Description:
The data come from the RNA Mapping Database (RMDB), library OK1LIB. Chemical mapping of a 177-nucleotide RNA with 2A3 and DMS. DMS adducts were read by reverse transcription with MarathonRT. Values cover nucleotides 27 to 126. For 2A3, 4,446 sequencing reads were counted. The RNA was probed in 150 mM KOAc, 10 mM MgCl2 and 150 mM bicine (pH 8.5) at 24 C.
RNA sequence: GGGAACGACUCGAGUAGAGUCGAAAAGUCGGGCUGCCAGUCACGUUCUCGUUGGUGGUCGGCAACGUCGGCGAACCCAGCUGGCCCGAUGCCAUCACAAUGGUCGAGAACGCGAACAAGAACGCGGACUAUAGGGGAGGUUCGCCUCCCCUAUAGUAAAAGAAACAACAACAACAAC
Reactivity to 2A3 in 0.01 (KOAc 150mM, MgCl2 10mM, bicine 150mM(pH8.5), 24C), signal-to-noise 4, nucleotides 027 to 126: g090u060c030g000g020g010c040u090g030c020c010a030g000u020c020a000c060g020u040u000c020u000c020g050u030u110g120g010u030g000g050u060c180g010g010c000a020a040c000g040u030c000g020g000c030g020a090a090c030c000c010a000g010c010u010g010g000c000c000c030g020a010u020g000c010c010a030u040c040a030c020a060a280u190g140g080u090c020g000a020g010a050a010c010g030c000g020a080a030c030a080a030g040a090a030c020g030c010g070g050
Reactivity to DMS in 0.01 (KOAc 150mM, MgCl2 10mM, bicine 150mM(pH8.5), 24C), signal-to-noise 5, nucleotides 027 to 126: g020u010c020g010g010g040c020u020g000c090c050a100g020u000c030a060c000g020u000u010c010u000c010g010u030u020g000g030u000g000g030u010c150g030g000c070a060a050c300g000u010c020g000g000c000g000a130a190c070c040c060a300g010c010u010g000g020c030c070c040g010a150u010g000c010c010a000u020c070a020c110a160a100u040g010g020u020c010g000a030g020a040a020c010g010c010g000a060a050c110a120a060g010a050a080c040g000c020g020g000